[RMDB]
RNA sequence: GGGAACGACUCGAGUAGAGUCGAAAAAUGUUGCAUUUGAAGCUAUUGAAGCAUUAUCACAUUGUGUCAGUAAAGGUUUAUGGGAAUUCUUUUUACAAUGUGCACCAACUUUACUCAACUCUGGUAAAACCAGCUCUUAGUUCGCUAAGAGCUGGUUAAAAGAAACAACAACAACAAC
Reactivity to DMS in 0.01 (KOAc 150mM, MgCl2 10mM, bicine 150mM(pH8.5), 24C), signal-to-noise 2, nucleotides 027 to 126: a100u030g000u000u000g000c090a070u000u020u010g010a080a130g010c020u000a140u060u020g010a080a030g010c000a140u040u000a110u030c070a060c030a100u010u000g010u030g010u000c240a030g040u030a000a010a000g000g000u030u000u000a080u030g000g000g000a160a030u000u010c030u000u000u000u040u060a130c070a020a000u000g000u010g000c140a110c170c080a010a060c040u000u010u000a050c000u010c120a030a080c250u000c120u000g000g000u000a040a010
Reactivity to 2A3 in 0.01 (KOAc 150mM, MgCl2 10mM, bicine 150mM(pH8.5), 24C), signal-to-noise 2, nucleotides 027 to 126: a000u090g000u000u020g000c000a220u000u000u160g050a030a000g100c000u020a020u000u300g010a110a000g000c000a000u070u070a100u110c050a000c030a090u000u100g000u020g080u150c160a050g000u060a010a010a010g020g080u000u160u300a060u270g050g050g000a060a000u220u270c020u000u090u060u020u000a060c040a040a000u210g050u030g160c000a020c000c000a040a090c000u080u160u110a030c070u000c210a100a000c000u020c000u030g120g000u100a030a020